Conditions: 150 mM KOAc, 10 mM MgCl2 and 150 mM bicine (pH 8.5), 24 C. Structure probing data (2A3 and DMS) for a 177-nucleotide construct. 2A3 adducts were read by reverse transcription with SuperScript II with manganese. For DMS the reverse transcriptase was MarathonRT. Values are in units of 0.01, from 0 to 300, in steps of 10. For DMS, 2,082 sequencing reads were counted. Reactivities are given for positions 27 through 126. High 2A3 reactivity points to a flexible backbone, as in loops and unpaired stretches.
RNA sequence: GGGAACGACUCGAGUAGAGUCGAAAAUGACAAUUUUAUUGAUUGCUAUUGCUGCAUGACUGAUUGAAGUUAAAAUAUUUUUACAUAAAGUUAUGAUAAUUUCAAAUUCAUAGCUCAAAAUUGCAAAGCUACUCAUAGUAUUCGUACUAUGAGUAGCAAAAGAAACAACAACAACAAC
Reactivity to 2A3 in 0.01 (KOAc 150mM, MgCl2 10mM, bicine 150mM(pH8.5), 24C), signal-to-noise 5, nucleotides 027 to 126: u170g040a030c050a040a080u060u040u130u150a200u130u280g140a100u060u030g000c010u030a020u060u090g040c050u040g040c030a030u030g010a040c030u120g130a240u120u010g010a050a020g010u040u060a030a080a070a010u040a060u020u090u020u030u110a060c020a010u300a100a100a040g010u060u070a020u020g010a020u010a060a050u050u050u080c010a000a000a040u010u000c000a000u040a040g020c010u010c040a050a090a100a110u040u040g040c030a020a050a030
Reactivity to DMS in 0.01 (KOAc 150mM, MgCl2 10mM, bicine 150mM(pH8.5), 24C), signal-to-noise 2, nucleotides 027 to 126: u020g010a170c030a060a010u000u010u010u010a140u060u010g010a120u020u010g000c000u010a110u010u000g000c160u000g000c050a070u020g010a090c250u020g000a260u020u000g000a070a050g040u020u010a030a050a160a030u030a000u010u010u000u000u040a210c020a120u010a060a030a010g000u000u010a000u000g000a230u000a000a060u000u020u040c020a040a030a030u020u000c020a000u010a040g020c030u000c080a030a020a080a050u010u010g000c080a070a030a120